[RMDB]
RNA sequence: GGGAACGACUCGAGUAGAGUCGAAAAUAAAUGAGCGUACAGCACACUCAGACUGUACCCUAUCUGAGUGUGUCAACUUCAAAGUCCAACGACACACACAAGGCGUUGGAACAAGAGUGUGAGAAAAUCGUUGAGUAACCUUCGGGUUACUCAACGAAAAAGAAACAACAACAACAAC
Reactivity to DMS in 0.01 (KOAc 150mM, MgCl2 10mM, bicine 150mM(pH8.5), 24C), signal-to-noise 1, nucleotides 027 to 126: u010a020a160a150u000g000a190g000c060g060u000a110c130a140g010c010a000c000a000c000u000c000a000g020a030c170u000g040u000a130c050c010c030u050a140u000c010u000g000a000g030u000g010u000g030u000c000a030a090c020u000u000c020a030a180a230g000u000c020c000a040a010c020g000a020c000a050c140a120c300a100c300a070a030g000g000c000g020u000u000g000g000a050a020c000a060a290g000a010g010u020g000u000g000a020g020a030a060a050a030